[RMDB]
RNA sequence: GGGAACGACUCGAGUAGAGUCGAAAAUCACGACGACCACCGAAUGCGCCUACCGGCAUUCCACCGCCGAUGAUUUUGCCGAGGCAGGUUAAAUCUGGCACUACGCCGUAAUAAUCCUGUGCGCCAGGUAAUAAGAGACUUUCGAGUCUCUUAUUACAAAAGAAACAACAACAACAAC
Reactivity to DMS in 0.01 (KOAc 150mM, MgCl2 10mM, bicine 150mM(pH8.5), 24C), signal-to-noise 9, nucleotides 027 to 126: u010c030a060c040g010a060c040g010a080c080c070a110c110c090g000a060a060u010g000c060g020c060c050u000a100c150c050g000g010c020a060u000u000c030c060a080c070c050g010c020c020g000a080u000g010a050u000u000u000u000g020c040c060g000a120g010g010c060a050g010g010u000u010a040a090a080u010c030u010g020g000c010a120c130u010a100c140g000c000c010g010u000a060a080u010a080a070u010c020c020u000g010u000g010c060g010c040c040a060g000
Reactivity to 2A3 in 0.01 (KOAc 150mM, MgCl2 10mM, bicine 150mM(pH8.5), 24C), signal-to-noise 6, nucleotides 027 to 126: u050c010a010c030g060a010c030g060a050c030c030a010c030c050g060a070a040u080g010c040g060c040c030u080a100c040c030g050g000c020a020u060u020c030c030a050c030c030g030c010c030g070a080u070g020a020u050u070u070u100g020c020c030g020a100g100g000c040a020g020g020u010u030a030a120a050u100c080u130g020g000c020a020c130u200a040c130g010c010c000g000u010a020a030u070a060a040u140c010c010u030g020u050g050c030g030c020c010a030g040